[RMDB]
RNA sequence: GGGAACGACUCGAGUAGAGUCGAAAAGAUAUGGAUUUCUGACGGGUCAUCAACAGCUCGGAAACGAGACAUGAUGCCGUCAGAGAAUCCUAAGUCAGGCCUCACGACGGUUCGCCGUCGUGAGGAAGGUCACUAGUCUGUUCGCAGACUAGUGACCAAAAGAAACAACAACAACAAC
Reactivity to 2A3 in 0.01 (KOAc 150mM, MgCl2 10mM, bicine 150mM(pH8.5), 24C), signal-to-noise 1, nucleotides 027 to 126: g040a020u060a020u140g000g000a000u000u050u000c010u000g000a020c020g040g030g160u300c010a000u000c000a020a140c060a180g050c000u000c000g000g040a060a040a020c000g030a000g090a050c080a130u080g000a010u030g260c020c010g000u000c000a000g010a000g030a000a020u000c000c010u020a080a000g060u010c040a020g000g230c000c000u000c010a000c000g020a000c040g000g090u070u090c300g060c090c000g010u000c000g000u010g020a000g000g000a000a000
Reactivity to DMS in 0.01 (KOAc 150mM, MgCl2 10mM, bicine 150mM(pH8.5), 24C), signal-to-noise 2, nucleotides 027 to 126: g000a010u000a300u010g000g010a030u000u000u000c020u010g010a030c010g020g020g050u020c000a010u000c030a060a150c300a190g000c000u000c000g000g000a080a120a190c020g010a000g000a080c120a130u000g010a020u000g000c030c000g000u000c000a010g010a040g040a010a020u000c000c010u000a060a100g010u000c010a130g000g000c000c000u000c000a020c010g020a000c000g000g020u000u010c200g030c000c010g040u000c030g030u000g000a000g000g010a000a020
The data come from the RNA Mapping Database (RMDB), library TTRDEL. The record gives the reactivity of an RNA of 177 nucleotides to 2A3 and DMS. The 2A3 profile rests on 2,261 reads. Conditions: 150 mM KOAc, 10 mM MgCl2 and 150 mM bicine (pH 8.5), 24 C. For DMS the reverse transcriptase was MarathonRT.